[RMDB]
RNA sequence: GGGAACGACUCGAGUAGAGUCGAAAAGCCUCCUCGCUUCCAUAGAAAGGGGACGGGGCACAUCGCAAGUGCUACAACCGAGCGGUGGUAUCUGUCAAACUAAGCAGCCACUGCACAUCAAUUGACUAAACGAUGCCGAUCUUCGGAUCGGCAUCAACCUAUAGUCUAAGUUCGCUUAGACUAUAGGAAAAGAAACAACAACAACAAC
Reactivity to 2A3 in 0.01 (KOAc 150mM, MgCl2 10mM, bicine 150mM(pH8.5), 24C), signal-to-noise 8, nucleotides 027 to 156: g020c000c010u020c010c000u020c020g040c060u110u040c030c030a120u080a150g180a090a130a060g030g000g000g010a000c020g010g000g010g000c050a010c010a090u130c070g030c170a130a080g040u060g100c020u090a080c030a120a050c030c060g060a020g010c000g010g010u010g000g030u050a140u100c020u040g120u090c040a110a130a200c160u150a120a060g010c000a000g010c000c000a010c010u020g040c020a020c010a080u140c070a060a210u130u170g060a090c040u120a040a070a050c100g000a000u010g000c000c000g000a000u000c000u030u050c150g080g000a000u000c000g000g020c000a000u000c000a000a000
Reactivity to DMS in 0.01 (KOAc 150mM, MgCl2 10mM, bicine 150mM(pH8.5), 24C), signal-to-noise 2, nucleotides 027 to 156: g020c010c000u000c000c010u010c010g010c030u000u000c000c080a050u000a140g000a090a190a100g010g000g000g000a060c050g000g000g000g000c150a060c030a080u010c110g020c100a130a100g010u000g020c030u000a170c090a080a120c030c040g010a220g020c030g030g050u000g010g020u010a060u000c050u010g030u000c040a060a050a180c120u010a060a170g020c030a160g000c030c010a040c030u000g050c040a090c050a080u000c050a050a120u000u000g000a140c110u000a070a050a110c070g000a020u010g000c000c000g010a010u000c000u000u000c300g080g010a010u000c010g000g000c000a000u000c000a000a100